[RMDB]
Annotation
Conditions: 150 mM KOAc, 10 mM MgCl2 and 150 mM bicine (pH 8.5), 24 C. The record gives the reactivity of an RNA of 177 nucleotides to 2A3 and DMS. The DMS profile rests on 1,254 reads. DMS adducts were read by reverse transcription with MarathonRT. DMS (dimethyl sulfate) methylates the pairing face of unpaired adenines and cytosines.
RNA sequence: GGGAACGACUCGAGUAGAGUCGAAAAGGCGUCUUCGCUGCCUCGGCCGCCGUGCACUGACCGGUAGCCGCCGUAAUCGCGGCAUUGUUCCCAUAAACGGAUGUGGGUGUGGGUGUCGAAGUAGCAGGGUGAUCCGAUAUUUCGAUAUCGGAUCACCAAAAGAAACAACAACAACAAC
Reactivity to 2A3 in 0.01 (KOAc 150mM, MgCl2 10mM, bicine 150mM(pH8.5), 24C), signal-to-noise 2, nucleotides 027 to 126: g050g000c050g030u020c070u070u120c120g060c070u070g000c000c010u060c090g010g010c030c060g020c010c010g120u070g020c040a040c070u100g170a090c020c020g000g000u000a040g000c000c000g010c000c000g090u070a100a000u170c050g030c000g000g000c000a030u050u260g000u060u000c000c000c000a020u120a010a190a020c050g020g060a100u080g080u140g170g030g000u050g020u050g020g010g010u050g000u000c010g000a040a000g000u020a000g010c040a040g060
Reactivity to DMS in 0.01 (KOAc 150mM, MgCl2 10mM, bicine 150mM(pH8.5), 24C), signal-to-noise 1, nucleotides 027 to 126: g040g020c100g010u000c070u020u000c070g040c020u000g000c000c010u010c060g000g030c000c010g020c000c000g000u000g040c040a060c080u000g010a100c040c000g020g000u000a160g000c020c000g050c010c070g030u010a080a110u000c300g000c010g000g000c010a110u010u020g000u000u000c000c000c010a140u010a050a070a100c030g010g000a070u010g020u000g000g010g000u000g010u020g000g000g020u000g000u010c020g010a020a020g010u000a060g000c030a110g000